This 177-nucleotide RNA was probed chemically with DMS.
RNA sequence: GGGAACGACUCGAGUAGAGUCGAAAAUCUUCGUACUUCGGUACGAAGAAAAGGCCAACCCACUGGCCGAGGUGAAACCCAGCGUGGAGGGCACCAACGCGAAAACGGGGGGCUUCGGCCCCCCGAACCUGUUUGAUAUGUUCGCAUAUCAAACAGGAAAAGAAACAACAACAACAAC
Reactivity to DMS in 0.01 (KOAc 150mM, MgCl2 10mM, bicine 150mM(pH8.5), 24C), signal-to-noise 1, nucleotides 027 to 126: u020c010u020u000c000g010u000a010c000u000u020c210g060g050u000a000c010g020a010a000g000a020a030a030a110g020g030c000c020a040a100c070c010c010a160c300u020g010g000c000c010g010a080g000g000u030g010a030a070a100c030c000c010a170g010c090g000u010g000g020a150g000g000g000c040a060c000c050a050a130c080g000c090g000a070a020a060a120c050g000g000g000g010g020g000c010u000u010c140g020g020c000c000c010c000c000c020g040a010a000
It was measured as part of the RMDB library M2PK50. The RNA was probed in 150 mM KOAc, 10 mM MgCl2 and 150 mM bicine (pH 8.5) at 24 C.